The record gives the reactivity of an RNA of 177 nucleotides to 2A3 and DMS. For 2A3 the reverse transcriptase was SuperScript II with manganese. For DMS the reverse transcriptase was MarathonRT. Reactivities are given for positions 27 through 126. The RNA was probed in 150 mM KOAc, 10 mM MgCl2 and 150 mM bicine (pH 8.5) at 24 C.
[RMDB]
RNA sequence: GGGAACGACUCGAGUAGAGUCGAAAAGGUCUCCUAUCGGCUACAUCACUAUUUCGAUUUCACGGUCACUAAAUAGUGGAGGAGAUUGUAACUGCUUGCCGAGACGGGUUCAAAUCUUUAGCGAACACUUUUAAAUCGGGUUCGCCCGAUUUAAAAGAAAAGAAACAACAACAACAAC
Reactivity to 2A3 in 0.01 (KOAc 150mM, MgCl2 10mM, bicine 150mM(pH8.5), 24C), signal-to-noise 2, nucleotides 027 to 126: g030g010u030c050u010c060c010u080a120u120c010g030g000c020u080a030c020a080u110c010a000c010u010a040u040u050u080c060g040a020u050u090u130c070a060c110g090g070u060c030a010c090u140a060a050a070u040a030g000u000g020g000a020g020g000a010g000a000u030u060g000u040a040a050c030u030g010c020u100u120g020c000c000g000a010g010a030c070g060g030g000u070u110c060a050a090a140u090c060u070u180u190a040g020c000g060a040a010c040a020
Reactivity to DMS in 0.01 (KOAc 150mM, MgCl2 10mM, bicine 150mM(pH8.5), 24C), signal-to-noise 3, nucleotides 027 to 126: g000g010u000c000u000c000c000u000a130u020c050g000g020c010u000a060c100a080u000c040a040c010u000a010u010u000u000c300g000a120u000u000u000c240a130c290g000g000u000c030a100c230u010a030a050a020u000a030g010u000g010g020a060g000g010a070g000a040u000u000g000u010a080a160c080u010g000c100u000u010g000c020c000g000a070g020a070c190g000g000g000u000u000c080a030a060a080u010c040u000u000u000a040g010c100g010a050a040c050a170